[RMDB]
RNA sequence: GGGAACGACUCGAGUAGAGUCGAAAACGACCACCUGACGGGUCGGACAUAGCGUCAGGAUCAUCCGUGACAGUCACCACGGUAAUCAUGUGUCUGAUGAUGGUUUUCCAUCUUAAUCUGACUGCGUCGUAGCAGUCUACAGUACUAUGACAUUAGAAUAUACCCACGGUUUCGACCGUGGGUAUAUAAAAGAAACAACAACAACAAC
Reactivity to DMS in 0.01 (KOAc 150mM, MgCl2 10mM, bicine 150mM(pH8.5), 24C), signal-to-noise 1, nucleotides 027 to 156: c030g000a080c030c020a130c010c050u060g000a040c050g010g020g000u000c000g020g000a110c090a080u020a140g000c030g020u000c000a030g010g020a110u000c070a060u000c000c020g050u000g030a050c020a260g000u000c030a300c080c020a000c000g000g040u000a120a050u000c130a120u030g010u000g030u000c060u000g000a180u000g010a070u020g020g020u000u000u000u000c020c000a000u000c020u020u010a080a110u000c080u010g000a070c010u000g010c020g040u010c170g020u000a140g030c000a000g030u000c050u000a020c110a140g010u000a050c030u000a050u010g000a000c060a090u010u000a060g000a080
Reactivity to 2A3 in 0.01 (KOAc 150mM, MgCl2 10mM, bicine 150mM(pH8.5), 24C), signal-to-noise 2, nucleotides 027 to 156: c030g010a010c010c000a010c000c000u010g000a000c010g000g010g000u020c050g080g040a060c050a170u110a040g040c010g000u010c000a000g000g000a000u070c010a030u000c000c000g000u000g010a000c000a030g020u010c010a020c040c000a000c000g000g020u040a010a030u050c050a070u100g020u000g000u000c000u020g000a050u080g000a000u000g050g000u140u210u130u040c000c010a010u020c000u050u100a110a110u110c120u070g000a000c000u000g010c000g010u130c020g000u100a000g020c000a000g000u010c010u010a000c010a000g090u070a030c010u020a070u080g010a000c010a070u040u090a070g070a190